RNA sequence: GGGAACGACUCGAGUAGAGUCGAAAAGUUGCCGACGAACCUUCCAACCUUCCAAACGUCGUUUUCCACAACCUUCCAACCUUCCAAUCUACUCGAGAGGAGGAGGAGGAGGAGGAGGAGGAAUUAAUGUUACUACAAGUUUCGACUUGUAGUAACAAAAAGAAACAACAACAACAAC
Reactivity to 2A3 in 0.01 (KOAc 150mM, MgCl2 10mM, bicine 150mM(pH8.5), 24C), signal-to-noise 2, nucleotides 027 to 126: g030u020u010g110c050c010g000a030c020g010a040a070c000c020u030u000c040c030a070a080c020c010u040u000c010c000a080a090a080c030g020u000c000g020u040u020u010u050c030c010a060c030a130a080c000c010u040u000c020c030a080a070c040c010u020u030c010c010a040a060u000c000u030a050c020u030c050g070a040g000a040g170g010a050g020g030a060g030g040a030g000g000a070g030g040a030g020g070a020g020g060a040g030g050a020a000u160u180a210a080
Reactivity to DMS in 0.01 (KOAc 150mM, MgCl2 10mM, bicine 150mM(pH8.5), 24C), signal-to-noise 4, nucleotides 027 to 126: g000u000u000g000c050c000g000a070c030g010a130a110c060c030u010u000c010c030a100a090c070c020u010u000c030c040a090a130a090c090g020u000c000g020u000u000u000u000c010c010a170c120a090a090c050c020u000u010c000c010a110a100c030c020u020u000c020c020a100a200u000c020u000a070c050u000c030g010a030g000a200g010g000a160g010g000a120g010g000a130g030g010a140g000g000a110g000g010a140g000g030a170g000g010a300a040u010u010a050a140
Source information
Structure probing data (2A3 and DMS) for a 177-nucleotide construct. The 2A3 profile rests on 3,489 reads. Source: RMDB library M2PK90, as collected in RNAgym. For 2A3 the reverse transcriptase was SuperScript II with manganese. DMS adducts were read by reverse transcription with MarathonRT.